[RMDB]
RNA sequence: GGGAACGACUCGAGUAGAGUCGAAAAGAUAUGGAUGCGCACAGGGAGCUGAUGGUCGGAAACGACCAUUCAGCUUUGAUCUGUGGCGCAUCCUAAGUCAAAACUUGACCUCUUCGGAGGUCAAGAACAAGUAUCUAUAGUUCGCUAUAGAUACUUGAAAAGAAACAACAACAACAAC
Reactivity to 2A3 in 0.01 (KOAc 150mM, MgCl2 10mM, bicine 150mM(pH8.5), 24C), signal-to-noise 4, nucleotides 027 to 126: g020a000u060a030u170g010g000a000u000g000c000g010c010a000c000a010g010g050g070a040g020c000u010g010a010u000g010g010u010c010g010g040a050a080a070c000g000a000c000c000a000u050u020c010a000g010c000u020u020u010g010a010u000c000u000g030u060g090g020c000g000c000a000u000c000c000u000a020a010g020u010c030a020a010a130a200c000u000u000g000a000c010c000u010c000u070u080c300g090g010a000g030g000u010c000a000a000g000a000a010
Reactivity to DMS in 0.01 (KOAc 150mM, MgCl2 10mM, bicine 150mM(pH8.5), 24C), signal-to-noise 9, nucleotides 027 to 126: g000a050u000a300u010g000g000a010u000g010c000g020c010a040c000a010g000g000g000a010g020c000u000g010a020u000g000g010u000c000g010g000a090a110a260c010g020a010c000c010a010u010u010c010a000g010c000u000u000u010g010a040u010c010u000g010u000g020g020c000g020c010a000u000c000c000u000a010a090g010u000c040a130a090a110a220c010u000u000g000a010c000c000u000c000u000u010c250g020g010a010g000g000u000c000a000a000g000a090a190